[RMDB]
Chemical mapping of a 177-nucleotide RNA with DMS and 2A3. For DMS the reverse transcriptase was MarathonRT. The reactions ran in a buffer of 150 mM KOAc, 10 mM MgCl2 and 150 mM bicine (pH 8.5), at 24 C.

RNA sequence: GGGAACGACUCGAGUAGAGUCGAAAAGGUCCAGUGUGAGAUUUAGGAGCAUCUAUCAGAAUGUUCUCAUUCAUGUUUAAUCACCUGAUAAUGAGUUUGUAUCUGUACAGAGACGGAGCGGGUCCUCCUAGUCGAUCUAAUUCGUUAGAUCGACUAGAAAAGAAACAACAACAACAAC
Reactivity to DMS in 0.01 (KOAc 150mM, MgCl2 10mM, bicine 150mM(pH8.5), 24C), signal-to-noise 7, nucleotides 027 to 126: g010g010u010c020c020a090g010u000g020u010g010a100g020a090u010u000u000a100g010g010a110g010c080a060u000c040u000a100u010c070a050g010a080a060u010g010u000u000c030u010c030a040u000u000c030a030u000g000u000u000u000a100a110u000c200a050c030c040u010g000a080u010a050a060u000g000a040g010u000u000u000g020u000a050u000c020u000g010u000a060c110a070g010a080g010a070c120g000g000a080g010c040g010g000g000u000c030c020u000c110
Reactivity to 2A3 in 0.01 (KOAc 150mM, MgCl2 10mM, bicine 150mM(pH8.5), 24C), signal-to-noise 4, nucleotides 027 to 126: g050g000u020c030c010a030g010u030g020u050g120a150g020a140u040u100u190a100g030g030a030g030c030a040u000c020u070a110u080c020a030g100a130a050u150g030u090u000c030u000c010a020u020u030c020a020u020g020u040u080u080a090a070u080c030a010c020c000u010g010a030u070a170a040u030g020a020g070u050u080u100g070u080a090u020c020u010g050u010a030c020a070g050a000g010a050c010g010g020a030g000c020g040g050g000u000c000c010u010c010